[RMDB]
RNA sequence: GGGAACGACUCGAGUAGAGUCGAAAAUUAAAUGAUGUAGUACGGCCGCCACUGAAGGACGCGUCCUCUCCGAAAGGAGAGUUGAGUAGAGUGUGAGCAGGACCGGGUGCUAGUCACUGGUGAAAAAGACGACAAGGAUGUUCGCAUCCUUGUCGUCAAAAGAAACAACAACAACAAC
Reactivity to DMS in 0.01 (KOAc 150mM, MgCl2 10mM, bicine 150mM(pH8.5), 24C), signal-to-noise 1, nucleotides 027 to 126: u000u000a060a070a170u010g000a020u010g010u020a000g010u010a090c100g010g020c030c030g030c050c020a010c060u010g040a090a150g010g000a060c060g010c040g000u010c070c000u010c000u020c000c000g010a070a090a150g010g010a000g000a020g010u000u000g020a150g070u010a070g000a130g000u000g000u000g000a130g000c010a080g000g060a130c120c060g020g000g080u020g030c000u000a050g020u000c010a090c050u000g020g020u010g010a100a060a030a070a100